[RMDB]
RNA sequence: GGGAACGACUCGAGUAGAGUCGAAAAGAAUUGAGGCAGACUCUGGACGAUGGUCUCACAAGAUCUCAACUAUCGAGGGCAUGUGCGGAUGCCCUGUCUUUGAUGUUGGGAAGAACAGGCUCAUUGGACUAACGGUCGUGUUCGCACGACCGUUAGUAAAAGAAACAACAACAACAAC
Reactivity to DMS in 0.01 (KOAc 150mM, MgCl2 10mM, bicine 150mM(pH8.5), 24C), signal-to-noise 2, nucleotides 027 to 126: g000a140a130u000u000g000a080g000g020c050a060g000a140c070u030c060u010g010g000a120c050g010a070u000g010g000u010c000u020c100a080c210a120a100g000a100u000c000u000c000a010a030c020u010a010u010c000g010a020g000g000g010c000a000u000g010u010g030c030g050g000a150u000g010c010c020c060u000g010u000c010u000u000u020g010a040u010g020u000u000g000g010g000a020a030g000a130a090c140a070g000g000c060u000c020a090u000u000g020g020
Reactivity to 2A3 in 0.01 (KOAc 150mM, MgCl2 10mM, bicine 150mM(pH8.5), 24C), signal-to-noise 2, nucleotides 027 to 126: g050a040a090u160u080g010a060g010g070c030a030g010a150c040u000c040u090g040g030a030c020g080a070u080g020g040u000c010u040c040a090c050a090a140g040a170u000c000u030c030a010a010c010u150a030u050c020g020a010g000g000g000c000a000u040g110u140g070c060g170g210a100u300g000c000c000c010u000g010u040c000u020u070u100g020a000u000g000u000u000g060g000g020a010a010g010a030a050c050a030g020g030c050u060c080a050u030u150g080g050